[RMDB]
RNA sequence: GGGAACGACUCGAGUAGAGUCGAAAACAACCUGUCUUCUUUAAACACGAGAGUUCAGGUCAGUCCAUUUGAAAUCUCAUGGUCCAUCUGUCCCUUGAAUUAUUGGCCACUUGGCUGGUAAUUACAAAUGGUGUGGGUGGUAGGCAGUGGCUGUCAAGCCUCAGUACCUCUUCGGAGGUACUGAGGCAAAAGAAACAACAACAACAAC
Reactivity to 2A3 in 0.01 (KOAc 150mM, MgCl2 10mM, bicine 150mM(pH8.5), 24C), signal-to-noise 1, nucleotides 027 to 156: c030a000a030c000c000u000g040u030c030u140u120c030u040u120u180a110a190a050c160a110c180g000a030g010a050g030u020u050c030a040g000g000u040c040a030g010u000c000c030a080u080u050u140g260a190a120a120u110c100u010c100a140u160g070g040u000c000c000a010u020c040u100g120u230c000c000c000u010u120g020a010a000u010u010a000u000u020g000g010c010c010a170c250u300u300g000g000c000u000g010g000u000a000a000u010u010a150c060a090a080a030u150g030g020u100g010u030g060g010g010u020g000g000u000a060g000g020c010a000g000u000g020g020c030u000g040u170c170a100a070